[RMDB]
RNA sequence: GGGAACGACUCGAGUAGAGUCGAAAACUUAUUUGGACCUAUGCAAUAGGACUUUAGGGUAACGCUUCAGGGUAGGAAUACAGCAGAGUCCCCUAAUUUCUUGUGUGCCUUAGCCAUCUGAAUAGGAAAGCCCUCCUGCGGUUCGCCGCAGGAGGGCGCUAUUCAAUUCCUUCGGGAAUUGAAUAGCAAAAGAAACAACAACAACAAC
Reactivity to 2A3 in 0.01 (KOAc 150mM, MgCl2 10mM, bicine 150mM(pH8.5), 24C), signal-to-noise 1, nucleotides 027 to 156: c000u000u060a010u020u020u000g010g000a000c030c000u010a020u030g000c010a020a030u020a050g010g000a010c000u010u020u030a010g010g020g000u080a160a020c030g020c040u100u090c070a040g050g070g000u030a030g000g150a110a140u050a060c010a000g000c010a010g020a000g130u120c000c010c000c010u020a030a010u000u040u030c020u000u060g020u020g050u070g050c020c070u010u030a000g000c000c030a020u000c010u030g020a010a010u020a030g060g000a130a210a030g030c000c020c040u000c000c000u010g000c020g000g100u060u040c210g020c080c030g000c010a000g030g080a010g000g000g000c000

The record gives the reactivity of an RNA of 207 nucleotides to 2A3. It was measured as part of the RMDB library ARCHII. Values cover nucleotides 27 to 156.